[RMDB]
RNA sequence: GGGAACGACUCGAGUAGAGUCGAAAACUCCAUUGCUUCGGCAAUGGAGAAACAGGACGUGAGACCGAAACGGAGGUAGGUCCAACUACCUUCUCACAAAUAAAACGCUUAGGUUCGCCUAAGCGAAGCCUAAACAUUCCUUCGGGAAUGUUUAGGCAAAAGAAACAACAACAACAAC
Reactivity to 2A3 in 0.01 (KOAc 150mM, MgCl2 10mM, bicine 150mM(pH8.5), 24C), signal-to-noise 1, nucleotides 027 to 126: c010u000c010c010a000u000u010g000c000u030u020c170g130g000c000a000a020u020g000g000a020g010a000a000a010c090a040g050g070a050c060g000u060g010a020g030a030c050c040g020a160a150a020c130g090g030a020g000g000u000a000g000g010u040c060c010a020a110c000u000a000c010c000u050u010c010u000c000a070c080a000a080a010u150a000a080a020a030c000g030c020u000u000a010g030g040u020u070c280g070c040c000u010a000a000g000c000g020a030a010
Reactivity to DMS in 0.01 (KOAc 150mM, MgCl2 10mM, bicine 150mM(pH8.5), 24C), signal-to-noise 1, nucleotides 027 to 126: c000u060c010c000a000u000u030g000c000u000u000c210g060g040c000a000a000u000g000g000a030g000a020a060a050c190a120g000g000a130c080g030u000g000a060g020a290c040c000g000a020a080a120c120g000g020a030g000g000u000a010g000g000u020c190c060a080a170c020u000a020c000c010u000u000c020u000c090a030c030a110a100a060u000a010a060a090a130c070g010c010u010u000a000g020g010u000u020c220g010c000c000u000a000a000g010c000g020a020a040
The record gives the reactivity of an RNA of 177 nucleotides to 2A3 and DMS. 2A3 adducts were read by reverse transcription with SuperScript II with manganese. The reactions ran in a buffer of 150 mM KOAc, 10 mM MgCl2 and 150 mM bicine (pH 8.5), at 24 C. DMS adducts were read by reverse transcription with MarathonRT.